Record summary: An RNA of 177 nucleotides, treated with DMS and 2A3 and read out base by base. The data come from the RNA Mapping Database (RMDB), libraries RFM100 and RFMREP. Conditions: 150 mM KOAc, 10 mM MgCl2 and 150 mM bicine (pH 8.5), 24 C.
RNA sequence: GGGAACGACUCGAGUAGAGUCGAAAAUGAGCUCCUUCCUGCCGACAUAUCCAUGGCAGCCUAUGGAUUCGCACGAGAAGGACAUAAACAGCUCAGUAGUGGCACGCUCACAACCUGGUUAUACAUCAGGUAAUGAGGAGUUCGCUCCUCAUUACCUAAAAGAAACAACAACAACAAC
Reactivity to DMS in 0.01 (KOAc 150mM, MgCl2 10mM, bicine 150mM(pH8.5), 24C), signal-to-noise 5, nucleotides 027 to 126: u000g000a020g000c040u000c000c010u010u000c040c010u000g010c140c090g010a090c300a060u040a050u000c000c030a010u000g030g030c220a110g000c170c040u000a040u000g000g000a030u000u000c080g000c080a040c110g020a140g020a050a010g000g010a130c260a100u040a090a140a130c300a050g000c030u010c010a050g000u010a050g000u000g000g010c020a120c060g030c060u000c020a060c100a070a100c050c000u000g000g000u000u020a100u040a050c150a050u000c110
Reactivity to 2A3 in 0.01 (KOAc 150mM, MgCl2 10mM, bicine 150mM(pH8.5), 24C), signal-to-noise 5, nucleotides 027 to 126: u080g000a010g000c020u010c010c000u010u000c000c000u040g070c090c050g050a070c060a200u200a010u010c020c010a010u020g040g050c080a040g060c000c010u050a010u000g000g000a010u050u000c020g030c010a030c100g090a110g010a220a000g000g020a010c010a010u180a000a130a020c020a020g010c000u010c010a040g040u110a020g000u070g030g010c060a040c190g030c040u020c000a030c030a020a080c000c000u010g030g030u120u040a170u050a140c070a060u120c070